[RMDB]
RNA sequence: GGGAACGACUCGAGUAGAGUCGAAAACUCGGCAAGGGGCGGCAGUCCUCAGUGCUCUUACUCUUUCCUAUAAAGAGGAGACUGCUGGACUCGCCGCCCAAGCCCGAGCAUGGGCCCCAGUUCCGAACACCUUUCGACUUCGGUCGAAAGAAAAGAAACAACAACAACAAC
Reactivity to DMS in 0.01 (KOAc 150mM, MgCl2 10mM, bicine 150mM(pH8.5), 24C), signal-to-noise 5, nucleotides 027 to 129: c040u020c040g000g000c020a070a030g010g020g010g000c020g010g050c000a070g020u000c050c000u020c000a000g000u020g090c060u060c020u000u080a300c070u010c020u000u000u000c240c160u100a120u050a000a000a000g060a070g030g000a060g020a000c000u010g030c120u030g060g010a030c010u020c160g030c020c040g000c010c030c010a040a010g010c240c020c000g020a010g030c100a000u050g020g020g030c050c050c040c070a090g000u010u150c010c030g050a130a130c130a100c080
Reactivity to 2A3 in 0.01 (KOAc 150mM, MgCl2 10mM, bicine 150mM(pH8.5), 24C), signal-to-noise 3, nucleotides 027 to 129: c010u000c010g000g000c010a040a080g010g000g000g000c030g000g000c000a010g000u000c000c000u000c000a030g010u120g200c000u000c000u030u180a240c000u020c010u050u020u030c040c070u150a130u190a290a020a010g000a000g010g000a010g000a010c020u010g020c000u000g010g000a000c000u000c010g010c000c010g020c000c010c000a000a000g000c000c000c020g000a000g000c030a040u090g020g020g020c000c000c020c000a020g040u050u010c020c020g040a080a040c040a080c050